[RMDB]
RNA sequence: GGGAACGACUCGAGUAGAGUCGAAAAUCAAGAGUACAACUUCGAUGUAUGAGAACUGGGUGUAAAAUAUACUCGACACAGUUCUCUUUGAGUAUAUCGCAUCAAUCAUGUAUUGAAGUUGUCAGAAGAUAGUAUUCUCAUUCGUGAGGGUACUAUCAAAAGAAACAACAACAACAAC
Reactivity to DMS in 0.01 (KOAc 150mM, MgCl2 10mM, bicine 150mM(pH8.5), 24C), signal-to-noise 8, nucleotides 027 to 126: u050c060a100a090g010a120g020u040a020c000a000a000c000u000u000c010g000a010u000g000u010a010u000g000a030g020a090a130c210u030g010g010g000u000g030u000a050a090a130a030u010a000u000a000c000u000c010g020a050c300a110c200a110g010u010u010c040u000c030u000u000u010g000a010g000u000a010u000a000u000c100g000c010a010u000c000a080a110u000c000a010u000g010u000a020u000u000g000a010a000g000u000u000g010u000c050a080g000a110a080
Reactivity to 2A3 in 0.01 (KOAc 150mM, MgCl2 10mM, bicine 150mM(pH8.5), 24C), signal-to-noise 9, nucleotides 027 to 126: u140c050a060a040g080a060g110u190a010c000a000a000c000u000u000c000g010a000u000g010u020a000u000g020a060g090a180a120c210u260g110g050g000u030g020u090a060a090a160a000u010a000u000a000c000u010c010g080a020c060a010c040a290g140u260u050c090u020c000u060u040u080g000a000g000u000a000u000a000u020c070g000c010a010u010c000a010a060u010c000a000u000g010u020a000u000u000g010a000a000g000u000u000g010u000c000a000g010a060a020
An RNA of 177 nucleotides, treated with DMS and 2A3 and read out base by base. For DMS the reverse transcriptase was MarathonRT. Conditions: 150 mM KOAc, 10 mM MgCl2 and 150 mM bicine (pH 8.5), 24 C. Source: RMDB library OK1LIB, as collected in RNAgym.